[RMDB]
RNA sequence: GGGAACGACUCGAGUAGAGUCGAAAAGCGUAAGGCGGCCACAGCAGAAGCUUUCACGUCGCAGCCGCUGUCAGAUUCUGGUGAAUCUGCGAUUUCUGCUGAAAUGUAGGCUGAAGAGACAGCCAAACGCGUGAGCGGUAUUCGUACCGCUCACGCGAAAAGAAACAACAACAACAAC
Reactivity to 2A3 in 0.01 (KOAc 150mM, MgCl2 10mM, bicine 150mM(pH8.5), 24C), signal-to-noise 1, nucleotides 027 to 126: g090c060g170u250a070a010g010g000c010g000g000c020c000a060c000a020g000c010a000g000a040a000g010c000u000u150u210c190a100c120g070u050c000g000c000a000g000c000c000g000c040u040g010u000c000a000g020a020u130u040c040u250g150g000u220g090a070a010u000c000u020g000c000g000a000u000u090u000c000u000g040c000u070g040a020a020a020u240g000u100a040g000g000c000u000g000a040a000g000a000g000a060c000a000g060c000c000a020a300a000